[RMDB]
Annotation: An RNA of 177 nucleotides, treated with DMS and 2A3 and read out base by base. For DMS the reverse transcriptase was MarathonRT. Values cover nucleotides 27 to 126. Conditions: 150 mM KOAc, 10 mM MgCl2 and 150 mM bicine (pH 8.5), 24 C. The data come from the RNA Mapping Database (RMDB), library TTRDES. The DMS profile rests on 4,227 reads. The 2A3 profile rests on 9,020 reads.
RNA sequence: GGGAACGACUCGAGUAGAGUCGAAAAAAAAGAUAUGGACUGUGUGCAUGGUAUUUCACCGUUGAAACUACCUCGGAAACGAGGUAGUGGAGGUGAAUAUCUGUGAUGCACAGUCCUAAGUCAAAAACCUUAAGUAAUGCUUCGGCAUUACUUAAGGAAAAGAAACAACAACAACAAC
Reactivity to DMS in 0.01 (KOAc 150mM, MgCl2 10mM, bicine 150mM(pH8.5), 24C), signal-to-noise 3, nucleotides 027 to 126: a060a030a080a060g010a030u000a300u000g020g010a010c000u000g020u000g020u000g000c030a020u010g000g020u000a070u010u000u000c010a010c000c000g030u010u000g020a200a110a010c000u000a000c000c000u000c000g010g000a130a070a230c010g000a010g000g010u000a000g000u000g020g010a040g010g030u010g020a010a010u000a030u000c000u000g020u000g000a090u010g020c000a000c000a010g000u000c010c000u000a010a050g020u000c020a060a060a070a140a090
Reactivity to 2A3 in 0.01 (KOAc 150mM, MgCl2 10mM, bicine 150mM(pH8.5), 24C), signal-to-noise 3, nucleotides 027 to 126: a000a000a000a000g080a040u080a060u120g000g000a010c020u020g000u010g000u000g020c010a020u070g030g060u060a120u060u220u070c010a010c000c030g160u210u030g000a010a010a000c010u010a000c000c000u010c010g030g020a030a090a040c020g000a010g000g010u000a010g000u000g000g000a010g000g000u000g010a000a000u010a010u000c020u040g080u030g080a300u080g010c000a010c000a000g010u000c000c000u000a010a000g000u000c020a030a030a040a160a190